[RMDB]
RNA sequence: GGGAACGACUCGAGUAGAGUCGAAAAUCGAUCUCGUUCGUUCGUGAUCGUGAACGUUCGAGAGAUCGUACGAACGUGUUCUCACACGUGUGAACACACACGAUCUCGAGAGAGUGUGAGAUCUCACGAUCGAGUUCGUGUGAACGAACGAGUGUACAGAAGGAAUCGGUUUCGACCGAUUCCUUCUAAAAGAAACAACAACAACAAC
Reactivity to 2A3 in 0.01 (KOAc 150mM, MgCl2 10mM, bicine 150mM(pH8.5), 24C), signal-to-noise 1, nucleotides 027 to 156: u080c050g010a090u050c000u000c000g000u030u000c010g000u000u000c050g190u120g020a070u040c010g020u030g000a000a120c040g120u170u070c030g000a020g000a000g000a080u000c010g000u010a090c010g020a140a030c050g020u000g020u040u020c020u040c040a050c020a050c110g080u070g060u000g090a120a000c030a000c000a000c000a000c100g050a050u000c000u000c010g100a120g000a010g000a090g000u100g010u050g060a150g050a100u040c000u000c000a000c020g000a080u010c060g020a100g090u130u150c080g000u050g070u080g080a000a010c000g000a000a030c020g000a020g030u030g000u070a080c180
Chemical mapping of a 207-nucleotide RNA with 2A3. The reactions ran in a buffer of 150 mM KOAc, 10 mM MgCl2 and 150 mM bicine (pH 8.5), at 24 C. The data come from the RNA Mapping Database (RMDB), library OK3TST. The 2A3 profile rests on 526 reads. Values cover nucleotides 27 to 156.